[RMDB]
RNA sequence: GGGAACGACUCGAGUAGAGUCGAAAACGGCUAUUCGCUUUUUCUUCCUUUCCUCUACCCACUGCUCGAGGGCCUCCUCCCUCGCCUUCGAGCCGGGUCUUGCAUCGGGUUGGCUCAUCCUGAGACCUUACUAGAUCUUUCGAGAUCUAGAAAAGAAACAACAACAACAAC
Reactivity to DMS in 0.01 (KOAc 150mM, MgCl2 10mM, bicine 150mM(pH8.5), 24C), signal-to-noise 9, nucleotides 027 to 129: c080g000g000c060u020a100u010u000c090g020c070u010u010u010u010u010c040u020u010c070c020u020u010u030c000c030u040c030u000a100c060c030c000a130c180u040g000c000u000c000g020a020g000g000g000c040c110u000c040c040u000c000c000c000u030c130g010c020c010u030u020c020g000a060g060c000c170g000g020g010u000c070u030u040g030c060a100u020c010g010g000g040u010u020g010g020c030u020c030a070u030c020c030u040g010a170g000a070c100c020u000u000a120
Reactivity to 2A3 in 0.01 (KOAc 150mM, MgCl2 10mM, bicine 150mM(pH8.5), 24C), signal-to-noise 9, nucleotides 027 to 129: c020g020g000c040u100a120u170u140c060g030c060u060u040u020u050u040c020u020u060c020c020u010u040u020c010c010u030c020u050a090c010c000c030a100c100u150g010c000u010c000g010a020g000g000g000c000c010u100c000c010u050c010c010c000u020c040g010c000c000u010u030c000g010a000g000c010c000g000g010g010u010c020u060u110g030c010a060u030c010g020g000g000u030u040g030g000c000u010c040a090u020c020c010u020g040a050g040a090c000c010u010u000a020